[RMDB]
RNA sequence: GGGAACGACUCGAGUAGAGUCGAAAAACUUACUUAUUAAGAUUAGCAAACUUCUUUAUGUAUCACAAUGACCUAUGCUACGACAUGGAAGGCGAGGGCCUACUAGAGCACUACUGUCGUUGCAACCUCUGCACACCACACCGUUGCCUAGCCACAACACUCGAAUAGAAUUCGUUCUAUUCGAGUGAAAAGAAACAACAACAACAAC
Reactivity to 2A3 in 0.01 (KOAc 150mM, MgCl2 10mM, bicine 150mM(pH8.5), 24C), signal-to-noise 4, nucleotides 027 to 156: a000c030u070u070a020c010u090u110a100u140u140a230a010g030a050u050u110a030g030c030a030a090a110c030u070u070c020u060u240u060a150u190g070u040a030u070c040a030c040a160a200u160g010a040c010c020u090a040u140g000c010u050a020c030g020a020c020a040u080g070g010a030a050g030g020c030g030a080g020g060g040c040c000u050a080c020u020a030g040a020g080c020a010c060u050a020c050u050g040u040c000g020u010u010g030c000a010a060c000c030u040c050u050g020c050a030c020a030c020c000a010c000a010c000c030g020u030u030g000c030c000u010a020g020c010c010a040c010a170a010
Reactivity to DMS in 0.01 (KOAc 150mM, MgCl2 10mM, bicine 150mM(pH8.5), 24C), signal-to-noise 1, nucleotides 027 to 156: a060c020u010u000a050c040u010u010a100u000u000a080a170g010a140u000u000a080g010c050a080a090a110c040u000u000c010u010u010u010a070u020g000u000a020u000c060a030c080a040a050u030g040a080c030c030u000a150u000g000c020u000a060c080g000a070c070a070u010g000g000a120a060g010g000c000g010a160g040g010g010c050c050u020a140c050u000a090g010a160g020c060a050c040u000a050c040u020g010u000c020g030u000u010g010c020a030a030c050c040u000c020u000g030c060a090c080a080c050c000a030c020a030c030c020g050u000u000g040c010c010u010a080g000c020c000a030c010a040a150
Overview
The data come from the RNA Mapping Database (RMDB), library OK3TST. This 207-nucleotide RNA was probed chemically with 2A3 and DMS. For DMS the reverse transcriptase was MarathonRT.